[RMDB]
RNA sequence: GGGAACGACUCGAGUAGAGUCGAAAACUCUGAAGGCAUGAUCACCCCGUCCGAUGCGGAAGUUCGUGCUUCCGUCGAACGCGAAAGUCGGACGGCGGCCAUGAGUCGCAACGCAAAGCCGCGUCAAUAAGCUCGUCGUCGUUCGCGACGACGAGAACAGUGUGAAGUAGUUCGCUACUUCACACUGAAAAGAAACAACAACAACAAC
Reactivity to 2A3 in 0.01 (KOAc 150mM, MgCl2 10mM, bicine 150mM(pH8.5), 24C), signal-to-noise 5, nucleotides 027 to 156: c020u020c060u090g050a140a050g080g030c010a020u020g010a060u100c040a050c020c010c010c000g000u000c000c000g010a010u040g010c010g010g000a000a000g010u140u300c190g120u300g090c000u030u000c000c010g020u030c020g060a120a030c070g000c030g170a150a040a000g040u010c010g000g010a000c000g020g000c010g000g000c010c000a060u050g020a020g100u070c040g030c110a040a030c020g020c080a100a080a040g060c080c040g010c050g020u040c030a060a180u120a190a030g030c000u000c000g000u000c000g000u000c010g030u060u040c140g010c000g040a000c000g000a000c000g010a000g000a010a000
Reactivity to DMS in 0.01 (KOAc 150mM, MgCl2 10mM, bicine 150mM(pH8.5), 24C), signal-to-noise 2, nucleotides 027 to 156: c060u000c020u010g010a170a040g030g000c040a100u000g000a100u000c100a120c000c000c000c000g060u000c010c020g000a060u000g020c060g000g010a050a010g020u010u000c280g000u000g030c000u000u000c000c010g030u000c080g030a120a190c140g020c050g000a140a140a110g060u010c000g050g010a040c000g000g010c100g000g010c050c030a070u000g000a090g020u000c020g020c040a030a060c000g020c050a060a090a110g000c020c000g030c020g010u000c070a090a130u010a050a160g030c010u000c000g030u000c000g000u000c000g040u000u000c150g030c010g000a010c000g010a010c010g000a000g000a020a070
The record gives the reactivity of an RNA of 207 nucleotides to 2A3 and DMS.
The RNA was probed in 150 mM KOAc, 10 mM MgCl2 and 150 mM bicine (pH 8.5) at 24 C.
The data come from the RNA Mapping Database (RMDB), library M2RFPK.
For 2A3, 3,648 sequencing reads were counted.
The DMS profile rests on 3,335 reads.
For DMS the reverse transcriptase was MarathonRT.